About this RNA:
The record gives the reactivity of an RNA of 177 nucleotides to DMS and 2A3. Source: RMDB library OK2TRN, as collected in RNAgym. DMS adducts were read by reverse transcription with MarathonRT.
RNA sequence: GGGAACGACUCGAGUAGAGUCGAAAAAUAAGCAGGCAAUUAAGACCUGGCUGGAGCAUGCUAAUCAGACCAUUCACCCCUAGGCCUCUAAUUCCUGGCUCUCUUAGCUCUCCAACAGUCCGUGUAGCACAGGGAACAUAUUCGUAUGUUCCCUGUGAAAAGAAACAACAACAACAAC
Reactivity to DMS in 0.01 (KOAc 150mM, MgCl2 10mM, bicine 150mM(pH8.5), 24C), signal-to-noise 6, nucleotides 027 to 126: a060u000a070a080g010c020a030g000g010c040a110a100u000u010a140a120g000a080c030c030u000g010g020c040u000g020g000a070g010c210a050u000g010c020u000a040a050u000c090a050g000a080c070c020a090u010u010c130a270c050c020c020c040u000a070g000g000c090c030u010c080u000a060a140u020u000c040c020u000g020g010c070u000c020u000c040u000u000a080g010c030u000c020u000c010c040a040a080c130a090g010u000c030c030g020u010g000u010a100g000
Reactivity to 2A3 in 0.01 (KOAc 150mM, MgCl2 10mM, bicine 150mM(pH8.5), 24C), signal-to-noise 1, nucleotides 027 to 126: a000u120a050a000g050c030a000g040g050c040a050a080u120u060a240a060g050a040c020c010u000g030g020c010u020g000g040a000g010c040a060u110g070c010u020a010a060u100c020a010g060a090c010c010a050u170u150c060a110c000c000c000c000u030a060g020g050c010c000u030c040u060a090a070u140u030c020c000u010g030g020c000u000c000u000c000u000u000a000g010c010u000c020u000c040c000a040a040c030a010g030u000c000c030g100u080g020u100a020g020